RNA sequence: GGGAACGACUCGAGUAGAGUCGAAAAGAAGCUACGAAAAAUCUCAGAGAGAGAAAAAUGAGAUGAACGUGUGUACGAAGUGCUAGGCGAAACUCUCUCGACGCCGAAAACACGGAAAAGUAGCGAAGGGUUCAUUCUAGUUCGCUAGAAUGAACCCAAAAGAAACAACAACAACAAC
Reactivity to 2A3 in 0.01 (KOAc 150mM, MgCl2 10mM, bicine 150mM(pH8.5), 24C), signal-to-noise 2, nucleotides 027 to 126: g090a020a030g000c010u000a000c000g060a010a040a040a060a020u000c000u000c040a090g000a000g000a000g010a000g000a090a160a100a250a120u280g000a010g000a010u020g000a030a000c000g000u010g040u050g000u040a000c010g200a300a080g000u020g000c000u020a000g010g000c000g030a070a150a170c030u000c000u010c000u010c000g050a030c020g000c000c000g000a130a000a000a000c000a000c020g000g030a070a050a000a040g000u000a000g000c020g050a070a060
Reactivity to DMS in 0.01 (KOAc 150mM, MgCl2 10mM, bicine 150mM(pH8.5), 24C), signal-to-noise 2, nucleotides 027 to 126: g000a180a230g010c010u000a010c000g010a050a070a070a160a000u000c000u000c030a220g010a030g020a020g000a030g030a050a050a120a030a090u030g000a000g020a010u000g020a030a090c000g070u040g000u030g000u000a000c010g000a100a110g020u000g020c040u000a050g000g000c000g040a160a150a180c000u000c000u020c000u000c030g010a160c060g000c000c000g010a020a000a110a300c000a000c010g000g050a050a080a080a130g000u000a010g000c000g030a160a120
An RNA of 177 nucleotides, treated with 2A3 and DMS and read out base by base.
For DMS, 2,469 sequencing reads were counted.
DMS adducts were read by reverse transcription with MarathonRT.